The record gives the reactivity of an RNA of 177 nucleotides to 2A3 and DMS.

RNA sequence: GGGAACGACUCGAGUAGAGUCGAAAAGGGCGAUCAAUGCGUCGAACACGAGGUAGGUCGAAAGCGCGGAACGUGGGUAGGAGCGCUUGGUCGGCAGGUGCUGCGAACCGAGCAAGCGCCUGCUGGAUCCAUAACUUGGGUUCGCCCAAGUUAUGGAAAAAGAAACAACAACAACAAC
Reactivity to 2A3 in 0.01 (KOAc 150mM, MgCl2 10mM, bicine 150mM(pH8.5), 24C), signal-to-noise 3, nucleotides 027 to 126: g050g010g000c030g020a020u060c060a120a120u150g020c040g070u040c040g060a140a040c050a020c150g010a030g040g060u120a020g060g030u080c050g040a100a040a020g050c030g010c050g020g040a130a050c060g050u100g010g000g050u060a040g040g070a050g020c020g000c030u040u020g030g050u050c000g000g000c000a000g000g020u030g020c010u000g010c030g030a090a080c130c030g010a040g010c050a100a040g000c000g000c000c000u010g010c000u000g000g020a020
Reactivity to DMS in 0.01 (KOAc 150mM, MgCl2 10mM, bicine 150mM(pH8.5), 24C), signal-to-noise 4, nucleotides 027 to 126: g000g010g010c040g020a060u000c090a080a140u010g010c050g010u010c060g020a080a180c140a070c080g000a060g010g010u010a120g040g010u010c050g010a060a050a070g010c030g010c040g000g010a060a080c100g000u000g010g000g010u000a100g000g010a200g000c040g000c030u000u000g010g020u010c030g000g010c010a010g000g010u000g000c020u000g000c010g000a120a190c230c240g000a140g000c010a020a070g010c000g010c000c010u000g000c010u010g010g010a110

The reactions ran in a buffer of 150 mM KOAc, 10 mM MgCl2 and 150 mM bicine (pH 8.5), at 24 C.